[RMDB]
RNA sequence: GGGAACGACUCGAGUAGAGUCGAAAAUCCUAAGUCCUACCGUGUGCCAGAGGUCGGUGGGAGGAGAUUCGGAAACGAAUCUCCGUUGAUCACCGACUACCCACCUGGCACCGGUAGGAUAUGGAAAAAGCGUCCAUUUCUUCGGAAAUGGACGCAACGCUUAUACAUCCUUCGGGAUGUAUAAGCGAAAAGAAACAACAACAACAAC
Reactivity to 2A3 in 0.01 (KOAc 150mM, MgCl2 10mM, bicine 150mM(pH8.5), 24C), signal-to-noise 1, nucleotides 027 to 156: u040c010c000u020a080a030g010u010c000c000u000a000c010c000g150u140g000u010g250c000c000a000g010a010g070g010u000c010g000g000u000g000g000g000a000g000g000a000g000a000u000u000c010g040g030a050a090a080c000g000a010a010u000c000u000c010c000g000u070u020g000a000u000c000a000c000c000g010a000c000u000a000c010c000c020a070c000c000u000g000g000c010a000c000c000g010g010u010a000g000g000a000u000a010u010g010g030a020a020a010a030a040g000c000g010u000c010c000a010u020u000u000c000u030u100c250g070g010a000a000a000u000g000g000a010c010g000c010a000a000
An RNA of 207 nucleotides, treated with 2A3 and read out base by base. Conditions: 150 mM KOAc, 10 mM MgCl2 and 150 mM bicine (pH 8.5), 24 C. For 2A3 the reverse transcriptase was SuperScript II with manganese. Reactivities are given for positions 27 through 156. 2A3 is a SHAPE reagent: it acylates the 2'-hydroxyl of flexible nucleotides of all four kinds. Source: RMDB library RNAMAK, as collected in RNAgym.